The data come from the RNA Mapping Database (RMDB), library RNAMAK. The record gives the reactivity of an RNA of 207 nucleotides to 2A3. Values cover nucleotides 27 to 156.
RNA sequence: GGGAACGACUCGAGUAGAGUCGAAAAUAACUGGUUCGCCAGUUACAAUCCUAAGUCGCUCAUGAAGCUCCUGUAUGAGACAUGCUUAUCGGAAACGAUAAGCAACAGCUCAUACUGGGAGGGUGAGCGAUAUGGAGCACGAAUACUUCGGUAUUCGCGGUCAUGACCUCUUCGGAGGUCAUGACCGAAAAGAAACAACAACAACAAC
Reactivity to 2A3 in 0.01 (KOAc 150mM, MgCl2 10mM, bicine 150mM(pH8.5), 24C), signal-to-noise 1, nucleotides 027 to 156: u110a000a000c000u000g000g100u030u090c290g020c050c010a000g000u000u000a040c020a000a180u060c000c000u070a110a050g000u000c000g010c000u000c000a020u130g180a300a230g050c050u000c000c010u000g000u000a000u000g010a020g040a130c030a120u070g000c000u000u000a000u000c000g030g060a060a120a060c000g000a010u000a000a000g000c000a000a000c000a000g010c000u000c000a010u000a020c040u020g010g010g000a010g010g060g000u000g000a000g040c000g000a000u000a010u100g070g000a030g000c050a030c110g000a010a000u000a040c010u150u170c290g050g010u000a000u000u000c000g000